Structure probing data (DMS and 2A3) for a 207-nucleotide construct. It was measured as part of the RMDB library VIROID. DMS adducts were read by reverse transcription with MarathonRT.
RNA sequence: GGGAACGACUCGAGUAGAGUCGAAAAUCGGACUCAGAGGGGAGUGUGAUCCUGGUACCGCCGUAGAAACUGGAUUACGACGUCUACCCGGGAUUCAAACUCGGCCCCUCUCAGAGGUGAUUCUGAGCGAAAGGUCUGCGCUAAGCGCACUGAUGAGGAUGACAUAAUCGUUCGCGAUUAUGUCAUCAAAAGAAACAACAACAACAAC
Reactivity to DMS in 0.01 (KOAc 150mM, MgCl2 10mM, bicine 150mM(pH8.5), 24C), signal-to-noise 1, nucleotides 027 to 156: u000c050g030g020a160c050u000c050a070g030a130g010g010g020g020a110g020u000g000u000g010a080u000c010c000u010g020g040u000a020c090c030g040c030c040g060u020a090g010a110a090a300c220u030g000g020a300u020u000a070c000g030a020c010g020u000c010u000a020c070c000c070g130g020g010a040u000u000c100a050a020a020c070u000c060g000g010c000c030c010c000u000c000u000c010a070g010a070g030g050u010g010a210u000u010c040u000g040a050g030c050g020a090a090a120g010g000u000c120u000g070c010g080c020u000a110a140g060c080g050c030a080c040u010g010a160u000g040a230g040
Reactivity to 2A3 in 0.01 (KOAc 150mM, MgCl2 10mM, bicine 150mM(pH8.5), 24C), signal-to-noise 3, nucleotides 027 to 156: u080c020g060g080a010c010u010c050a010g010a010g010g030g000g000a030g000u060g030u070g010a000u010c020c010u010g000g000u020a010c010c010g000c000c000g020u010a020g160a080a270a060c170u170g060g050a140u200u040a010c030g000a010c000g000u000c040u040a040c000c070c030g000g010g000a020u130u130c020a100a040a120c020u020c000g250g040c000c000c010c000u000c000u000c000a010g010a010g000g050u080g030a050u180u040c020u070g060a040g080c050g070a150a050a020g030g000u030c080u090g010c020g010c070u160a190a100g030c010g010c040a010c050u060g020a060u050g040a070g150